[RMDB]
RNA sequence: GGGAACGACUCGAGUAGAGUCGAAAAUGAAGCAUGGCGAAAGCCAUGUGGAGGCCUGUUAGGGUUGGUGUCUUUCAACACCCUCCCGUGACCUACGUGUAGGGGUGAAAGGCCCAUCGAACCGGGCGGUCUUUAUAUUCUUCGGAAUAUAAAGACCAAAAGAAACAACAACAACAAC
Reactivity to DMS in 0.01 (KOAc 150mM, MgCl2 10mM, bicine 150mM(pH8.5), 24C), signal-to-noise 8, nucleotides 027 to 126: u010g000a300a220g000c000a000u000g000g000c000g010a120a100a180g010c000c010a000u010g000u000g000g010a210g010g010c010c000u000g010u010u010a120g000g000g010u000u000g000g010u020g020u000c010u000u010u000c030a060a080c040a120c000c000c010u000c040c100c000g010u010g010a120c210c130u040a030c010g010u010g010u010a020g000g010g000g020u000g000a010a010a020g000g000c000c010c000a010u000c040g010a090a100c230c030g000g000g010c040
Reactivity to 2A3 in 0.01 (KOAc 150mM, MgCl2 10mM, bicine 150mM(pH8.5), 24C), signal-to-noise 6, nucleotides 027 to 126: u140g000a020a010g000c000a000u010g000g000c000g060a110a020a000g000c000c000a000u000g000u000g000g010a030g020g050c000c000u010g030u050u100a090g010g030g080u020u040g030g010u240g020u110c000u000u010u000c040a110a100c060a300c030c000c010u050c020c050c000g030u050g150a300c050c090u150a010c020g050u110g040u210a020g000g000g000g000u000g000a000a000a000g010g000c000c000c000a000u000c030g010a030a030c020c000g000g010g000c000